This 207-nucleotide RNA was probed chemically with 2A3 and DMS.
[RMDB]
RNA sequence: GGGAACGACUCGAGUAGAGUCGAAAAUCUGAGAAACAAGAGGGUUGGAUUAGAUGACCUUUAAAUUCCCUUCCAGCCCUACACUCCAUUGAUUUGUGAUUCCUCAUGGGGAGGUACAACUUUUGAUUUCUAAGGACCAAUGGUUGAAAAAGUAAGCGAUAGUGAACCAAUUCGUUGGUUCACUAUCAAAAGAAACAACAACAACAAC
Reactivity to 2A3 in 0.01 (KOAc 150mM, MgCl2 10mM, bicine 150mM(pH8.5), 24C), signal-to-noise 3, nucleotides 027 to 156: u010c000u010g060a020g080a100a190a030c110a100a080g020a010g060g010g000u020u010g010g020a110u040u080a110g050a080u030g070a090c010c000u080u130u160a100a180a100u080u070c000c010c000u020u000c000c020a010g010c010c000c020u020a010c010a000c000u000c020c010a030u000u040g020a080u080u060u110g080u010g040a080u110u070c020c000u040c030a180u140g090g000g040g010a020g020g010u030a040c020a060a050c020u060u090u060u110g100a140u020u110u140c130u160a070a130g060g020a040c040c020a030a010u070g010g000u090u060g100a060a080a110a020a030g210u270a090a030g050c100
Reactivity to DMS in 0.01 (KOAc 150mM, MgCl2 10mM, bicine 150mM(pH8.5), 24C), signal-to-noise 1, nucleotides 027 to 156: u010c040u010g010a140g020a110a060a090c010a130a140g020a110g010g070g090u000u000g040g030a070u020u010a060g050a120u000g010a150c180c150u000u010u020a040a110a260u010u000c000c020c000u000u000c020c010a090g010c000c020c050u000a090c040a040c020u010c020c030a210u010u000g010a080u010u000u000g030u000g000a190u010u010c010c020u000c070a170u010g030g000g020g000a030g000g020u010a090c080a000a040c020u020u000u010u010g000a040u010u010u000c070u000a170a180g050g010a020c020c010a010a070u000g000g000u000u000g000a060a050a040a050a140g020u000a040a050g010c270

Annotation
DMS adducts were read by reverse transcription with MarathonRT. It was measured as part of the RMDB library OK3TST. The DMS profile rests on 1,863 reads. In probing experiments dimethyl sulfate is read out at A N1 and C N3, which are open when not base-paired.